[RMDB]
RNA sequence: GGGAACGACUCGAGUAGAGUCGAAAAGCCCUUGAGCCGCGCGGUGCGGAUAUAUUGCGCCGUCAUCACCUCGGUCAUCGAGGCGCGGGUCAUCCGCGCGAUAUAACCCAUGCCAUAGAGCGCGAUGAGCACACUCUAAAUUCGUUUAGAGUGUGCUAAAAGAAACAACAACAACAAC
Reactivity to 2A3 in 0.01 (KOAc 150mM, MgCl2 10mM, bicine 150mM(pH8.5), 24C), signal-to-noise 7, nucleotides 027 to 126: g030c000c000c000u010u110g080a030g020c010c010g000c000g020c020g010g020u030g000c050g010g020a030u050a020u020a030u080u130g000c000g000c010c020g030u030c040a080u080c020a030c010c000u020c010g050g100u240c100a160u260c060g010a030g010g000c020g020c050g030g020g010u050c010a050u050c030c010g000c000g000c000g010a010u010a000u000a050a020c030c020c030a040u140g020c020c000a100u110a060g060a040g030c000g000c010g040a090u100g050
Reactivity to DMS in 0.01 (KOAc 150mM, MgCl2 10mM, bicine 150mM(pH8.5), 24C), signal-to-noise 5, nucleotides 027 to 126: g000c020c010c010u030u010g010a090g020c030c020g020c010g010c040g020g000u000g020c040g010g000a140u030a060u010a090u020u030g010c020g010c010c050g000u020c130a090u020c080a120c010c000u000c020g020g010u040c250a110u020c020g010a020g000g000c040g000c060g010g000g000u020c050a090u030c100c120g000c000g010c010g010a070u010a020u020a080a150c060c030c060a070u020g000c050c080a150u020a060g010a200g000c000g010c030g000a120u000g010